[RMDB]
Conditions: 150 mM KOAc, 10 mM MgCl2 and 150 mM bicine (pH 8.5), 24 C.
The record gives the reactivity of an RNA of 177 nucleotides to 2A3 and DMS.
For 2A3, 35,262 sequencing reads were counted.
It was measured as part of the RMDB library OK2TRN.

RNA sequence: GGGAACGACUCGAGUAGAGUCGAAAAAUGGAGUCUCAGGAUCCUACAUCCAUGCUAGAUGCGAUGUGACUAGCUCAGGUACGUACCAUGGAGCUAGGAGUACUAUCUAGAGUACGUACGUACAGUACGUGUGAAGGUAAUUCGUUACCUUCACACGAAAAGAAACAACAACAACAAC
Reactivity to 2A3 in 0.01 (KOAc 150mM, MgCl2 10mM, bicine 150mM(pH8.5), 24C), signal-to-noise 9, nucleotides 027 to 126: a010u130g040g020a080g130u030c030u030c100a060g130g020a050u040c000c010u020a020c010a030u000c020c010a030u070g050c050u160a070g020a170u030g050c090g070a060u050g060u030g060a030c010u000a000g000c000u010c010a020g110g000u040a050c070g040u040a020c030c020a130u140g140g000a000g000c000u000a000g010g000a010g010u050a060c050u060a060u080c040u050a040g010a030g080u030a010c030g010u010a000c030g010u040a050c020a090g090u070a040
Reactivity to DMS in 0.01 (KOAc 150mM, MgCl2 10mM, bicine 150mM(pH8.5), 24C), signal-to-noise 9, nucleotides 027 to 126: a090u010g010g000a090g020u010c030u000c080a170g020g010a100u000c030c030u000a060c060a050u000c010c020a050u000g010c150u010a060g000a040u000g010c170g010a050u000g010u000g010a190c010u000a010g010c000u000c010a120g010g010u000a050c170g010u010a020c000c030a160u000g020g000a020g010c010u000a000g000g000a120g010u010a090c100u010a060u000c050u000a060g000a140g010u000a050c060g000u000a010c040g010u000a050c130a170g010u010a070

Values cover nucleotides 27 to 126.